[RMDB]
RNA sequence: GGGAACGACUCGAGUAGAGUCGAAAAGAUAUGGAGUGUUGGGAGCCUAGGAUCGGAAACGAUCCGAAAGGCGAAGAACAACCUCCUAAGUCAAAGAGCCGUAAUACGUUCGCGUAUUACGGCUCAACAGAAUACUUAUGUUCGCAUAAGUAUUCUGAAAAGAAACAACAACAACAAC
Reactivity to 2A3 in 0.01 (KOAc 150mM, MgCl2 10mM, bicine 150mM(pH8.5), 24C), signal-to-noise 3, nucleotides 027 to 126: g000a010u010a000u060g000g010a040g010u300g010u200u010g000g000g000a010g000c000c010u040a190g020g000a010u010c010g000g000a040a000a000c000g000a000u030c040c010g000a090a050a010g010g000c020g050a180a040g010a000a010c000a000a000c010c000u000c000c000u000a000a000g000u010c030a100a140a110g010a000g000c000c000g000u000a000a000u000a010c030g020u020u120c300g000c010g130u010a000u000u000a010c010g000g000c010u000c000a000a000
Reactivity to DMS in 0.01 (KOAc 150mM, MgCl2 10mM, bicine 150mM(pH8.5), 24C), signal-to-noise 6, nucleotides 027 to 126: g000a010u000a040u010g000g000a020g000u020g010u000u000g000g000g000a040g020c000c000u000a300g000g000a000u000c000g030g010a010a010a020c000g010a000u000c000c000g000a020a090a050g030g010c010g000a050a090g010a090a230c020a010a010c010c000u000c000c000u000a000a080g000u000c010a080a120a160g000a020g020c000c000g010u010a000a010u000a000c000g010u000u010c230g020c010g020u000a000u000u000a000c000g000g000c010u000c000a000a040